[RMDB]
RNA sequence: GGGAACGACUCGAGUAGAGUCGAAAAGCUGCACACUUCGCAUUCUGCUAUACUAAAGUAAUGCAAACAACAUGCUCUGCCGGGAGGCUGUAUGAUGACCCGUGUGGUGUUUUCUGUGAUACACAGGGAUGCAUAUGGCGUUCGCGCCAUAUGCAUCAAAAGAAACAACAACAACAAC
Reactivity to DMS in 0.01 (KOAc 150mM, MgCl2 10mM, bicine 150mM(pH8.5), 24C), signal-to-noise 1, nucleotides 027 to 126: g000c020u000g000c040a010c050a020c110u030u000c200g000c000a010u000u000c110u000g100c000u010a080u160a140c140u020a040a110a180g020u000a040a040u020g000c050a060a030a130c290a090a050c180a030u010g030c010u020c060u010g000c030c000g030g010g000a070g030g010c070u000g010u000a000u070g050a110u010g000a280c000c000c000g000u000g010u000g000g040u000g020u000u010u000u000c000u060g010u000g000a190u010a050c050a000c080a060g000g000
Reactivity to 2A3 in 0.01 (KOAc 150mM, MgCl2 10mM, bicine 150mM(pH8.5), 24C), signal-to-noise 3, nucleotides 027 to 126: g100c020u030g010c040a040c000a020c020u090u140c060g000c040a030u040u000c040u060g150c020u090a110u040a190c060u210a200a070a030g070u060a060a070u090g070c010a090a080a050c030a020a040c000a030u100g000c000u050c100u080g020c020c000g060g010g010a070g060g020c020u010g040u030a080u070g080a030u120g090a030c020c020c050g010u010g000u050g010g000u000g050u010u000u040u000c020u000g040u020g120a170u120a130c020a030c010a050g080g050